Record summary: This 177-nucleotide RNA was probed chemically with DMS and 2A3. The reactions ran in a buffer of 150 mM KOAc, 10 mM MgCl2 and 150 mM bicine (pH 8.5), at 24 C.
RNA sequence: GGGAACGACUCGAGUAGAGUCGAAAAGAUAUGGACACGUCAUGGGACAUGAAAGAAGUAUCGGAAACGAUACGGAUUUCAACAGCCCAUGAGCGUGUCCUAAGUCAAACCCACGUUCGCGUGGGAACUUACAGUUGUCGUUCGCGACAACUGUAAGAAAAGAAACAACAACAACAAC
Reactivity to DMS in 0.01 (KOAc 150mM, MgCl2 10mM, bicine 150mM(pH8.5), 24C), signal-to-noise 3, nucleotides 027 to 126: g020a050u000a300u000g000g030a010c010a010c000g010u000c000a010u000g000g040g020a070c120a200u000g010a010a010a010g000a300a210g000u000a020u010c000g030g000a080a130a200c010g020a010u000a000c010g000g000a300u000u000u010c000a020a060c300a210g040c000c000c000a000u000g010a040g030c030g010u000g010u000c000c020u000a000a070g010u000c050a050a050a200c030c010c000a010c000g040u000u010c160g010c000g000u030g010g000g000a000a030
Reactivity to 2A3 in 0.01 (KOAc 150mM, MgCl2 10mM, bicine 150mM(pH8.5), 24C), signal-to-noise 1, nucleotides 027 to 126: g040a020u060a010u150g000g000a000c000a000c000g050u050c020a010u010g000g040g000a070c080a180u140g020a020a000a030g040a050a010g000u000a000u020c000g020g060a080a050a050c010g000a010u000a000c020g000g010a020u000u000u010c020a060a060c080a100g160c000c000c000a000u000g010a010g000c010g000u000g000u000c010c010u000a030a000g020u000c020a060a050a190c040c000c010a000c000g050u080u100c300g000c020g170u030g000g030g010a020a060
2A3 adducts were read by reverse transcription with SuperScript II with manganese.